[RMDB]
RNA sequence: GGGAACGACUCGAGUAGAGUCGAAAACUGAUCCAGCCAUGAAGGACCAUACAGCAGCCCCAGAAGAGAAGGAACUAGCAGGGGAGCCCUUUGAGGACCUGUUCACAGACGUGCGCAUCUGGAGCACCUCUAAAUCAUAAUUCGUUAUGAUUUAGAGAAAAGAAACAACAACAACAAC
Reactivity to 2A3 in 0.01 (KOAc 150mM, MgCl2 10mM, bicine 150mM(pH8.5), 24C), signal-to-noise 6, nucleotides 027 to 126: c010u010g010a060u030c010c020a010g030c030c010a060u110g060a100a040g040g010a020c020c000a020u070a160c040a060g010c010a020g010c010c010c000c010a040g060a170a010g060a050g030a090a050g070g010a050a040c040u030a050g010c020a020g040g030g010g030a040g010c020c010c020u110u070u130g100a130g000g030a030c010c010u040g020u080u060c090a110c010a090g120a070c060g020u040g020c030g000c040a060u010c030u060g030g010a010g020c010a020c000
Reactivity to DMS in 0.01 (KOAc 150mM, MgCl2 10mM, bicine 150mM(pH8.5), 24C), signal-to-noise 9, nucleotides 027 to 126: c050u000g010a080u010c030c030a080g010c050c040a050u010g010a130a100g010g010a090c050c050a070u000a070c100a070g020c050a080g000c040c040c020c050a110g010a090a080g010a100g000a090a070g010g010a070a080c090u000a050g010c060a050g000g000g010g000a120g000c040c020c020u010u010u000g010a110g010g000a100c040c040u000g010u000u010c070a080c060a060g000a070c110g010u000g010c080g000c040a080u010c040u000g000g010a150g000c050a060c120